[RMDB]
RNA sequence: GGGAACGACUCGAGUAGAGUCGAAAAAUAAAGAGGGUAAACGCGUCAUUGAGUGACGUGAAGAUCAUCCAAGUGUGCUGUCUACAGUCGUAGAUAGCGCACAUUACGCUAAGAUGAUCAUAAAAAACAAAGGUUCGAGGUUCGCCUCGAACCUUUGAAAAGAAACAACAACAACAAC
Reactivity to 2A3 in 0.01 (KOAc 150mM, MgCl2 10mM, bicine 150mM(pH8.5), 24C), signal-to-noise 1, nucleotides 027 to 126: a000u220a000a050a040g050a060g050g070g060u100a070a140a040c030g020c000g000u000c010a040u100u170g180a090g290u020g040a010c010g020u010g010a050a000g010a010u010c000a000u010c010c050a070a080g000u000g000u010g020c030u010g020u000c000u000a010c060a240g150u270c200g000u160a000g010a000u000a010g000c010g020c010a000c000a000u010u050a030c040g000c070u060a070a030g010a020u010g010a000u010c000a010u130a000a120a000a000a000a000
Reactivity to DMS in 0.01 (KOAc 150mM, MgCl2 10mM, bicine 150mM(pH8.5), 24C), signal-to-noise 1, nucleotides 027 to 126: a130u000a050a030a090g000a040g030g050g010u000a110a130a100c070g000c020g000u000c000a010u000u020g000a250g000u000g000a010c020g010u000g000a090a100g000a010u000c040a000u000c000c080a110a080g000u010g000u000g020c000u000g030u000c000u000a000c010a240g010u000c190g000u000a000g000a020u000a000g000c000g000c000a000c000a030u030u000a160c200g030c300u020a110a050g000a000u010g000a030u000c000a110u000a020a050a010a040a070a060